[RMDB]
RNA sequence: GGGAACGACUCGAGUAGAGUCGAAAACCGCUACGGGACGAAAAGACCCCGUGAACCUUUACUAUAGCUUCGCAUUGGUAUUGGAUAAUUAAUGUGUAGGAUAGGUCGGAGACAUUGAAGCAGGCACCGCUAUCAGUAGCUUCGGCUACUGAUAGCGAAAAGAAACAACAACAACAAC
Reactivity to DMS in 0.01 (KOAc 150mM, MgCl2 10mM, bicine 150mM(pH8.5), 24C), signal-to-noise 1, nucleotides 027 to 126: c040c000g030c130u010a060c020g010g040g030a160c020g010a140a130a250a180g010a130c070c010c000c020g000u050g030a130a150c090c000u000u000u030a080c040u000a050u020a130g010c050u000u010c080g000c070a150u000u000g000g030u020a000u000u010g000g000a110u030a080a090u000u000a040a040u000g000u040g010u050a030g000g000a050u000a070g000g000u000c110g050g000a100g000a070c110a060u000u000g000a080a050g000c040a180g000g010c120a050c090
Reactivity to 2A3 in 0.01 (KOAc 150mM, MgCl2 10mM, bicine 150mM(pH8.5), 24C), signal-to-noise 1, nucleotides 027 to 126: c010c000g000c030u020a020c000g000g010g020a020c010g120a000a230a080a050g150a110c000c000c030c000g000u020g090a030a060c030c000u040u130u230a030c020u010a000u030a100g020c000u060u030c110g000c070a050u020u060g010g010u010a080u050u130g120g000a040u090a270a000u140u060a010a100u060g060u060g030u090a020g050g000a020u010a060g030g010u100c050g060g000a010g000a020c060a090u060u120g010a020a020g060c010a020g070g070c050a020c110